[RMDB]
RNA sequence: GGGAACGACUCGAGUAGAGUCGAAAAGGAGUUAGUUUUGUAUUUUACUAUUUCGUACCGAGAUCCGUCACAGGUGCCCCUAGCUGAGUAGGCUAAGGCGUUUUAAGGUAAACUAGCUAAGGGAAAUAGUACCGGAUAAAUUCGUUUAUCCGGUACUAAAAGAAACAACAACAACAAC
Reactivity to 2A3 in 0.01 (KOAc 150mM, MgCl2 10mM, bicine 150mM(pH8.5), 24C), signal-to-noise 4, nucleotides 027 to 126: g100g010a060g010u050u050a050g020u010u050u050u120g120u070a200u050u120u100u050a050c060u030a080u040u090u080c040g030u040a040c000c000g010a020g010a080u070c050c020g050u040c030a040c020a090g000g080u030g060c000c000c000c000u000a000g020c020u030g030a020g120u170a040g210g010c020u060a090a060g030g010c020g000u020u040u080u110a020a020g030g000u040a060a010a060c020u010a020g030c010u020a030a100g090g020g030a030a040a040u010
Reactivity to DMS in 0.01 (KOAc 150mM, MgCl2 10mM, bicine 150mM(pH8.5), 24C), signal-to-noise 3, nucleotides 027 to 126: g000g010a080g000u000u010a030g010u000u000u000u020g020u020a090u020u060u010u030a070c050u000a060u000u020u000c100g000u010a090c020c010g020a260g010a040u010c060c020g020u010c050a090c130a140g020g000u010g000c020c000c010c040u000a000g000c010u000g000a130g020u030a140g010g000c020u000a050a050g000g030c020g000u000u000u010u000a040a210g000g000u000a010a040a030c030u000a030g010c060u000a020a060g000g000g000a070a070a090u000
Structure probing data (2A3 and DMS) for a 177-nucleotide construct. Conditions: 150 mM KOAc, 10 mM MgCl2 and 150 mM bicine (pH 8.5), 24 C.